Source: RMDB library OK2TST, as collected in RNAgym.
Structure probing data (DMS and 2A3) for a 177-nucleotide construct.
For DMS, 2,436 sequencing reads were counted.
The 2A3 profile rests on 1,771 reads.
RNA sequence: GGGAACGACUCGAGUAGAGUCGAAAAAUCAGCACGUCGACGGGGCGCCCCGGCUGCGCGACGGGCGCGCCCAGAUCGACCGACCAGUCAUAGCGCGCGGCCGUGUCGUAGCCGCCCAUCGUGCCUACCUAGCCUACGAUUUCGAUCGUAGGCUAGGAAAAGAAACAACAACAACAAC
Reactivity to DMS in 0.01 (KOAc 150mM, MgCl2 10mM, bicine 150mM(pH8.5), 24C), signal-to-noise 3, nucleotides 027 to 126: a060u010c090a090g000c030a110c140g000u000c040g010a050c070g000g010g000g020c000g030c030c010c000c010g000g000c030u000g010c120g020c010g010a070c010g000g010g000c200g050c040g000c000c020c000a010g000a090u000c010g000a010c010c030g010a070c070c060a120g000u010c070a100u030a100g010c070g030c050g020c120g020g020c010c010g010u000g000u000c090g010u000a100g010c050c010g000c020c040c050a040u010c030g000u000g030c020c050u000a180
Reactivity to 2A3 in 0.01 (KOAc 150mM, MgCl2 10mM, bicine 150mM(pH8.5), 24C), signal-to-noise 1, nucleotides 027 to 126: a000u130c040a010g020c010a000c040g020u020c020g040a060c030g010g030g020g030c010g020c010c000c000c050g020g020c040u110g010c040g020c040g060a020c000g020g000g000c030g000c010g000c000c000c000a020g000a140u010c010g000a000c000c010g020a020c010c060a020g080u050c020a070u120a110g050c010g030c020g030c000g060g000c020c020g120u130g050u090c040g000u030a030g020c020c020g050c000c010c000a050u040c020g030u020g000c010c030u100a060